RNA sequence: GGGAACGACUCGAGUAGAGUCGAAAAGAUAUGGACGAGGGUACAGAGCUUUGUGGUCGGAAACGACCAUGAGCGACGAAGUACCUCGUCCUAAGUCAAAACAGUAUAAGGUUCGCCUUAUACUGAAGUACAAGAGGUAGUUCGCUACCUCUUGUACAAAAGAAACAACAACAACAAC
Reactivity to 2A3 in 0.01 (KOAc 150mM, MgCl2 10mM, bicine 150mM(pH8.5), 24C), signal-to-noise 5, nucleotides 027 to 126: g010a000u020a010u050g000g000a000c020g010a040g120g190g040u090a010c030a060g200a060g160c020u110u300u300g100u030g000g000u010c000g010g000a030a000a020c010g000a000c010c000a010u000g000a000g000c020g050a080c160g090a030a010g000u000a000c000c000u000c000g000u000c000c000u000a000a000g000u000c000a010a010a120a180c010a010g010u000a010u000a010a010g040g050u050u170c300g080c080c000u000u000a000u000a010c000u000g010a080a030
Reactivity to DMS in 0.01 (KOAc 150mM, MgCl2 10mM, bicine 150mM(pH8.5), 24C), signal-to-noise 5, nucleotides 027 to 126: g000a020u000a060u010g000g000a000c000g010a030g000g020g020u010a020c010a100g020a120g020c010u000u000u020g100u000g000g010u000c000g020g000a030a010a060c000g010a020c000c000a000u000g000a010g010c000g020a220c280g010a120a130g000u010a040c000c000u000c000g000u000c000c000u000a000a040g000u000c010a130a090a110a290c010a010g000u010a000u000a000a000g010g010u010u010c300g010c000c000u000u000a000u000a000c000u000g000a020a090